[RMDB]
Annotation:
Structure probing data (2A3 and DMS) for a 207-nucleotide construct.
RNA sequence: GGGAACGACUCGAGUAGAGUCGAAAAGAAAACAGUUCUGUCAAGAAACAGUCUCGAAUAUACAAAGUAGGAUAGACCGACACAGACGAUAGGAUCUAGAAUGCUAGUUACAGUAUCUCUGUUACAGAGCAAACAUAAGACAAUCACUAAAAUUAUGUACCCUUCCUAAGUUCGCUUAGGAAGGGUAAAAAGAAACAACAACAACAAC
Reactivity to 2A3 in 0.01 (KOAc 150mM, MgCl2 10mM, bicine 150mM(pH8.5), 24C), signal-to-noise 4, nucleotides 027 to 156: g020a000a070a010a010c040a020g000u050u000c010u010g020u030c070a080a060g020a100a080a010c010a000g010u000c000u020c080g070a080a050u070a010u050a120c080a120a120a010g060u030a030g000g040a030u020a040g010a020c030c000g040a000c020a000c000a060g100a070c040g000a010u070a040g040g010a040u020c010u070a010g030a150a070u040g040c020u010a020g010u020u050a020c000a020g050u110a200u060c100u030c000u120g000u010u010a020c020a030g120a000g020c040a030a020a040c020a050u110a080a040g040a040c040a040a090u160c080a050c070u140a070a090a070a060u210u150a080u170g060
Reactivity to DMS in 0.01 (KOAc 150mM, MgCl2 10mM, bicine 150mM(pH8.5), 24C), signal-to-noise 2, nucleotides 027 to 156: g020a190a030a070a070c070a160g010u000u010c000u030g060u000c020a090a170g010a260a090a170c020a030g010u000c000u000c060g010a230a140u000a060u000a220c080a020a080a230g030u000a070g000g010a210u000a060g000a070c020c000g010a110c140a080c030a110g020a050c130g000a080u000a110g000g020a080u000c050u000a120g010a090a080u000g020c040u000a040g030u000u000a090c070a120g000u010a080u000c040u000c000u000g030u000u000a090c020a060g000a080g000c030a030a070a070c050a070u000a040a110g000a040c060a040a040u010c070a020c060u010a010a030a050a120u000u000a080u000g030

For 2A3, 2,107 sequencing reads were counted.